Source: RMDB library OK1LIB, as collected in RNAgym. This 177-nucleotide RNA was probed chemically with 2A3 and DMS. The reactions ran in a buffer of 150 mM KOAc, 10 mM MgCl2 and 150 mM bicine (pH 8.5), at 24 C. The 2A3 profile rests on 134,766 reads. Values cover nucleotides 27 to 126. For 2A3 the reverse transcriptase was SuperScript II with manganese.
[RMDB]
RNA sequence: GGGAACGACUCGAGUAGAGUCGAAAAGCUAGCCUGCGCACGAUCUGACUGCCGUGAAGUCUAGCCUGCGUCAGAACUAGUCUCCAUCAAUCAAAGCGCAGGGAUUGAUGUACGAGACUAGUACACAGUGAUAGGACUUCUUCGGAGGUCUUAUCACAAAAGAAACAACAACAACAAC
Reactivity to 2A3 in 0.01 (KOAc 150mM, MgCl2 10mM, bicine 150mM(pH8.5), 24C), signal-to-noise 9, nucleotides 027 to 126: g030c020u030a010g020c000c010u010g000c010g000c000a030c040g050a070u040c030u080g080a060c030u050g030c020c010g030u040g070a080a010g050u010c020u030a010g010c000c010u050g020c020g110u090c070a040g020a080a010c000u000a000g000u000c000u000c000c000a000u000c000a000a000u000c010a040a070a060g030c020g000c020a010g020g000g000a000u000u000g000a000u000g030u060a080c110g000a000g000a000c000u000a000g010u050a020c090a000c010a040
Reactivity to DMS in 0.01 (KOAc 150mM, MgCl2 10mM, bicine 150mM(pH8.5), 24C), signal-to-noise 9, nucleotides 027 to 126: g010c040u010a050g010c020c010u000g010c020g020c020a160c090g000a070u020c050u020g000a070c040u010g010c050c020g010u010g000a080a100g000u010c010u000a060g010c020c010u000g000c100g010u020c090a100g010a090a030c000u000a010g010u000c000u000c010c000a010u000c000a010a010u000c000a050a090a110g010c020g010c020a030g000g000g000a010u000u000g000a000u000g000u070a100c250g000a010g000a010c000u000a010g000u000a040c140a110c200a110